[RMDB]
RNA sequence: GGGAACGACUCGAGUAGAGUCGAAAAUCGGUUGUUUCUCUGAAGGCAUGAUCACCCCGUCCGAUGCGGAAGUUCGUGCUUCCGUCGAACGCGAAAGUCGGACGUCGGCCAUGAGUCGCAACGCAAAUAUACAUUUAGUAGUUCGCUACUAAAUGAAGGCUAGUAAAUUGUUCGCAAUUUACUAGCCAAAAGAAACAACAACAACAAC
Reactivity to 2A3 in 0.01 (KOAc 150mM, MgCl2 10mM, bicine 150mM(pH8.5), 24C), signal-to-noise 4, nucleotides 027 to 156: u120c020g020g000u000u000g000u000u000u000c040u030c090u110g090a180a070g050g000c040a050u100g010a010u070c050a090c010c000c020c050g000u010c000c000g010a010u030g000c020g040g020a010a010g010u140u300c140g150u300g090c000u000u010c010c000g020u020c040g060a140a050c070g000c030g180a110a030a030g020u000c000g000g010a000c010g040u060c050g020g020c030c030a060u030g030a020g120u080c040g010c060a070a060c040g030c070a030a150a000u160a010u030a080c000a010u000u000u000a000g000u000a000g020u030u030c150g000c120u000a000c000u010a000a000a000u010g020a040a020
Reactivity to DMS in 0.01 (KOAc 150mM, MgCl2 10mM, bicine 150mM(pH8.5), 24C), signal-to-noise 1, nucleotides 027 to 156: u020c010g030g060u000u000g010u000u000u000c000u040c050u040g000a120a080g020g030c030a100u000g020a150u010c060a120c010c020c050c020g010u000c010c000g000a070u000g040c030g000g030a160a020g050u000u010c300g030u020g000c000u000u000c010c020g000u000c050g000a070a060c110g000c050g010a050a150a180g040u000c000g000g000a030c000g010u000c010g020g040c040c000a060u010g020a080g020u000c020g040c020a020a100c090g010c050a080a090a110u000a130u000a230c010a010u000u000u000a010g000u000a010g000u000u010c300g020c000u000a010c000u010a000a010a000u000g000a090a150